An RNA of 177 nucleotides, treated with DMS and read out base by base. The data come from the RNA Mapping Database (RMDB), library RFMREP. For DMS the reverse transcriptase was MarathonRT. Conditions: 150 mM KOAc, 10 mM MgCl2 and 150 mM bicine (pH 8.5), 24 C. Reactivities are given for positions 27 through 126.
RNA sequence: GGGAACGACUCGAGUAGAGUCGAAAAUUUUAGCCACAAAAUGCAAUGCAUUUUGAACGUUGGCUUUGCCAACGGCUCCGUAGGAGCGAACAAAAUUAGAAAUAAUUUUGUGAGUAAUAAUCGACCGGUAGUGGUAAAGGUUCGCCUUUACCACUACAAAAGAAACAACAACAACAAC
Reactivity to DMS in 0.01 (KOAc 150mM, MgCl2 10mM, bicine 150mM(pH8.5), 24C), signal-to-noise 2, nucleotides 027 to 126: u000u040u000u000a090g010c050c070a220c010a000a010a020a010u030g010c020a180a120u010g030c040a000u000u000u030u000g010a150a300c040g000u000u000g010g010c000u010u010u020g000c010c000a010a010c000g010g010c000u000c010c060g010u000a110g020g020a060g030c000g010a110a010c000a000a000a020a020u000u000a030g010a110a060a160u000a030a010u000u000u000u000g000u000g010a190g000u000a080a120u020a090a120u010c060g010a060c130c070g030